[RMDB]
RNA sequence: GGGAACGACUCGAGUAGAGUCGAAAAAAAUAGAAGGCAUGGAAAUCAGAAUUUUAGGCAUCAUUUCUGCCAACAGAUGAAGAAGUGGAUUCUAGAGAAGUAAAAUGACUAACCAAGGCUUAACAUAGGUAGAACUAGGCCCAGAGCCAGGUUUCCACUAAUUACUCACUUUCGAGUGAGUAAUUAGAAAAGAAACAACAACAACAAC
Reactivity to 2A3 in 0.01 (KOAc 150mM, MgCl2 10mM, bicine 150mM(pH8.5), 24C), signal-to-noise 2, nucleotides 027 to 156: a000a010a010u110a010g060a050a040g010g010c070a020u050g030g030a160a110a000u090c030a040g120a230a180u110u080u140u130a160g010g000c010a000u040c010a030u180u170u060c050u040g000c030c000a040a020c000a060g090a090u070g060a080a030g040a050a040g010u060g020g060a080u140u000c010u080a060g030a010g020a100a050g020u040a030a000a060a120u090g040a040c030u050a080a000c060c050a050a010g040g000c050u060u030a010a000c030a030u100a060g040g010u010a060g020a040a020c070u030a030g030g020c030c050c050a040g020a010g030c000c000a000g000g070u000u000u000c010c000a000
Reactivity to DMS in 0.01 (KOAc 150mM, MgCl2 10mM, bicine 150mM(pH8.5), 24C), signal-to-noise 1, nucleotides 027 to 156: a060a030a120u010a120g000a070a100g020g000c060a000u000g010g000a050a100a070u000c080a080g000a090a100u000u000u000u000a080g010g060c030a110u010c040a090u010u010u000c100u020g010c020c000a110a100c160a080g000a110u000g010a110a050g010a090a070g010u000g010g000a140u000u000c060u020a120g020a140g020a060a040g020u000a010a040a050a120u030g000a110c030u000a100a050c080c020a050a100g000g020c050u010u000a000a050c050a120u020a120g020g020u000a080g000a060a080c150u000a110g010g020c010c030c080a050g020a050g020c030c020a070g000g020u000u000u000c000c010a300

An RNA of 207 nucleotides, treated with 2A3 and DMS and read out base by base. For DMS the reverse transcriptase was MarathonRT. 2A3 adducts were read by reverse transcription with SuperScript II with manganese.